[RMDB]
RNA sequence: GGGAACGACUCGAGUAGAGUCGAAAAAUCGCCACAGAGUAUUGCCAACCAAUAUUGAAGAUGUUAAAGGCAUGGCUGAGGUAAAAUAUUAGGAGAUAUGUCAUGAUGCGAUGUAGUGAAAGGUCAGCUUGCCAUGAUAUCCAACAUGAAGAGACGGGACCCAAUGGAUGUUCGCAUCCAUUGGGUCAAAAGAAACAACAACAACAAC
Reactivity to 2A3 in 0.01 (KOAc 150mM, MgCl2 10mM, bicine 150mM(pH8.5), 24C), signal-to-noise 2, nucleotides 027 to 156: a010u020c010g020c050c000a070c020a040g010a020g110u020a080u080u000g000c040c010a060a050c030c000a120a160u100a110u170u220g040a060a020g010a100u040g040u060u080a160a070a040g010g010c040a030u050g030g000c000u000g000a030g020g000u080a070a060a030a060u120a110u260u220a010g000g100a120g000a040u030a010u120g060u050c020a050u040g040a040u040g060c020g000a030u030g020u030a080g090u030g000a120a030a000g080g060u100c000a000g030c030u030u030g030c010c000a010u080g000a010u030a010u040c060c000a000a040c000a090u070g030a000a090g060a030g020a060c000g180g050
This 207-nucleotide RNA was probed chemically with 2A3. For 2A3 the reverse transcriptase was SuperScript II with manganese.